Structure probing data (DMS) for a 177-nucleotide construct. Conditions: 150 mM KOAc, 10 mM MgCl2 and 150 mM bicine (pH 8.5), 24 C. DMS adducts were read by reverse transcription with MarathonRT. Reactivities are rounded to 0.1 and cut off at 0 and 3. The data come from the RNA Mapping Database (RMDB), library M2PK50.
[RMDB]
RNA sequence: GGGAACGACUCGAGUAGAGUCGAAAAAAGCUCAUUUUCGAAUGAGCUUGAAGCGUGAACGCAGGAUAACGCAGAAACGCCCCGCUGAACCUCCCAAGCGAAAGAUUAAGGUCUUCGGACCUUAAAAAUCCAUGAUGCUAUUCGUAGCAUCAUGGAUAAAAGAAACAACAACAACAAC
Reactivity to DMS in 0.01 (KOAc 150mM, MgCl2 10mM, bicine 150mM(pH8.5), 24C), signal-to-noise 2, nucleotides 027 to 126: a010a000g000c010u000c000a010u000u000u000u000c130g020a060a000u000g020a020g000c010u000u010g000a130a110g000c040g010u000g000a060a220c110g040c000a080g020g000a080u010a130a130c110g000c000a100g000a250a140a080c140g000c000c020c010c010g010c060u000g000a100a150c090c060u000c020c000c010a080a050g000c160g020a050a040a090g010a160u000u000a010a020g000g010u000c000u000u010c140g040g000a000c000c010u000u000a010a030a070a120
For DMS, 1,119 sequencing reads were counted.